[RMDB]
RNA sequence: GGGAACGACUCGAGUAGAGUCGAAAAUGCUGAGCUUUCGAGCUCAGCAGAGGCAAGCAAGCAGCGCAACGAGACUAGACGAGCAUAAGAUCGAGCAUGCUACAAUACGGCACUUCGGUGCCGUAAAACUGUCUGACGAAUUCGUUCGUCAGACAGUAAAAGAAACAACAACAACAAC
Reactivity to DMS in 0.01 (KOAc 150mM, MgCl2 10mM, bicine 150mM(pH8.5), 24C), signal-to-noise 2, nucleotides 027 to 126: u000g040c000u000g010a010g020c000u000u010u020c170g010a040g000c000u000c020a000g000c000a010g040a110g040g030c100a020a030g010c080a070a080g010c030a040g000c040g020c050a100a050c030g000a080g000a120c080u000a070g020a090c080g000a090g010c040a020u000a040a090g010a060u010c070g010a070g030c080a010u000g000c080u000a050c110a050a210u000a020c000g040g000c000a000c000u000u010c170g020g010u010g000c000c000g030u000a000a040a100
Reactivity to 2A3 in 0.01 (KOAc 150mM, MgCl2 10mM, bicine 150mM(pH8.5), 24C), signal-to-noise 1, nucleotides 027 to 126: u010g000c000u000g010a000g000c020u040u080u220c200g070a000g000c000u000c000a010g000c000a000g000a000g030g080c050a030a000g060c030a010a060g000c020a010g050c000g000c130a070a110c020g030a010g070a070c010u050a050g050a160c050g080a050g010c020a060u070a150a000g020a100u070c030g020a060g020c010a010u040g040c000u040a090c010a040a050u040a050c000g000g000c000a000c010u020u050c190g070g010u020g000c000c000g000u000a000a000a000